[RMDB]
RNA sequence: GGGAACGACUCGAGUAGAGUCGAAAAUGCAAGUAGUGCUAUUGUUGGAAUCACCGUACCUAUGUAGGUUUACGCUCCAAGAUCGGUGGAUAGCAGCCCUAUCAAUAUCUAGGAGAACUGUGCUAUGAAAACGGUAUUGGCUUCGGCCAAUACCGAAUCAAUGUGUCGAGUUCGCUCGACACAUUGAAAAAGAAACAACAACAACAAC
Reactivity to 2A3 in 0.01 (KOAc 150mM, MgCl2 10mM, bicine 150mM(pH8.5), 24C), signal-to-noise 3, nucleotides 027 to 156: u190g010c030a060a040g090u090a020g000u110g030c010u030a030u080u050g060u040u060g010g030a060a030u060c000a010c000c010g030u060a060c000c010u130a120u230g060u130a040g000g000u010u100u040a040c060g020c040u000c030c000a030a010g000a050u040c040g000g020u030g000g040a030u030a010g020c040a020g010c030c000c000u080a020u070c020a090a050u040a030u240c030u050a040g000g020a070g020a040a020c030u100g040u060g070c030u030a010u160g130a030a020a010a080c010g000g000u000a000u010u000g000g000c000u040u020c270g060g000c010c000a000a000u010a000c000c000g010a000a000
Reactivity to DMS in 0.01 (KOAc 150mM, MgCl2 10mM, bicine 150mM(pH8.5), 24C), signal-to-noise 2, nucleotides 027 to 156: u010g010c000a120a150g030u000a070g030u000g030c030u000a060u000u010g070u000u000g020g010a080a130u000c020a040c010c000g030u000a090c020c010u010a160u000g010u000a070g040g010u000u010u010a070c070g010c020u010c030c000a070a050g040a060u000c070g000g020u000g000g000a080u000a040g040c010a150g000c090c120c000u000a080u000c030a120a090u020a050u000c080u000a070g000g000a090g010a100a050c070u000g050u000g000c040u000a010u000g010a040a050a080a270c030g020g000u010a020u010u010g020g010c020u000u020c300g030g000c020c000a010a010u000a020c000c000g000a010a020
This 207-nucleotide RNA was probed chemically with 2A3 and DMS. The RNA was probed in 150 mM KOAc, 10 mM MgCl2 and 150 mM bicine (pH 8.5) at 24 C. The 2A3 profile rests on 1,845 reads.